[RMDB]
Background:
Conditions: 150 mM KOAc, 10 mM MgCl2 and 150 mM bicine (pH 8.5), 24 C. This 177-nucleotide RNA was probed chemically with 2A3 and DMS.
RNA sequence: GGGAACGACUCGAGUAGAGUCGAAAACACAAACACACCUUUUUGACACUUUUCUUGUUGCCUGUGGCUAUUUGUUUGACUUAUGCAAACAUAGUCUACGAGCCCACUACUCCCAUUUCGUCAGCGCGAUACUGAAUUACUUCGGUAAUUCAGUAUCAAAAGAAACAACAACAACAAC
Reactivity to 2A3 in 0.01 (KOAc 150mM, MgCl2 10mM, bicine 150mM(pH8.5), 24C), signal-to-noise 7, nucleotides 027 to 126: c030a000c020a010a130a000c050a000c010a040c050c010u020u060u020u050u090g050a020c020a020c040u020u070u080u040c020u050u090g060u050u060g040c010c020u060g010u020g010g000c000u020a040u070u090u100g050u030u010u010g050a080c030u170u190a090u300g030c020a010a010a000c000a020u010a010g000u000c010u020a010c030g040a010g010c010c020c000a040c020u090a040c020u000c000c000c010a040u040u100u060c040g050u030c040a040g020c070g010c030
Reactivity to DMS in 0.01 (KOAc 150mM, MgCl2 10mM, bicine 150mM(pH8.5), 24C), signal-to-noise 6, nucleotides 027 to 126: c080a100c120a080a090a070c130a060c090a050c060c020u000u010u000u000u010g010a080c060a050c050u000u010u000u010c040u000u000g010u000u000g010c030c020u000g020u000g010g010c020u000a010u010u010u010g020u000u000u000g010a100c090u000u000a120u020g020c040a020a020a030c010a020u000a010g020u000c010u000a060c050g010a100g010c020c050c030a050c090u000a100c090u000c010c000c010a120u000u000u010c090g010u000c090a050g010c120g030c180

Values cover nucleotides 27 to 126.
Source: RMDB library 15KREP, as collected in RNAgym.
The DMS profile rests on 7,629 reads.
The 2A3 profile rests on 11,670 reads.